Background
An RNA of 177 nucleotides, treated with DMS and 2A3 and read out base by base.

[RMDB]
RNA sequence: GGGAACGACUCGAGUAGAGUCGAAAAAAAAGUGACAACACUUUAUGGAACAUGUGGUCACUGUCAUUGCUGUGAUGAAGCCUCUGAAUAAAUAAAAAAGCAUGCAGCUCCAAUUGGGGCUGCAUGUGCGUAUUCCCCUAUUCGUAGGGGAAUACGCAAAAGAAACAACAACAACAAC
Reactivity to DMS in 0.01 (KOAc 150mM, MgCl2 10mM, bicine 150mM(pH8.5), 24C), signal-to-noise 2, nucleotides 027 to 126: a040a070a050a010g040u000g000a020c070a040a050c010a040c090u010u020u030a160u070g000g010a170a060c230a240u020g000u000g000g000u000c010a020c030u020g000u010c050a080u020u010g010c080u000g010u010g010a070u030g000a150a060g010c040c010u000c060u000g000a060a070u030a060a080a060u060a030a010a060a070a040a080g000c000a000u000g000c000a000g000c010u000c000c000a200a210u030u070g020g000g010g000c000u000g000c000a000u000g020u000
Reactivity to 2A3 in 0.01 (KOAc 150mM, MgCl2 10mM, bicine 150mM(pH8.5), 24C), signal-to-noise 3, nucleotides 027 to 126: a000a000a000a000g020u020g000a040c020a270a020c000a030c030u070u080u080a210u240g100g040a040a010c060a090u190g020u010g050g010u000c010a000c020u020g000u000c000a010u000u160g080c050u080g050u090g090a120u010g070a060a000g030c000c040u020c060u040g050a040a080u200a210a040a020u300a000a080a040a050a000a000g050c000a000u000g010c000a000g000c000u000c030c010a190a300u220u300g010g000g040g000c000u000g000c000a000u000g000u000
Values cover nucleotides 27 to 126. The data come from the RNA Mapping Database (RMDB), library RFM100. DMS adducts were read by reverse transcription with MarathonRT.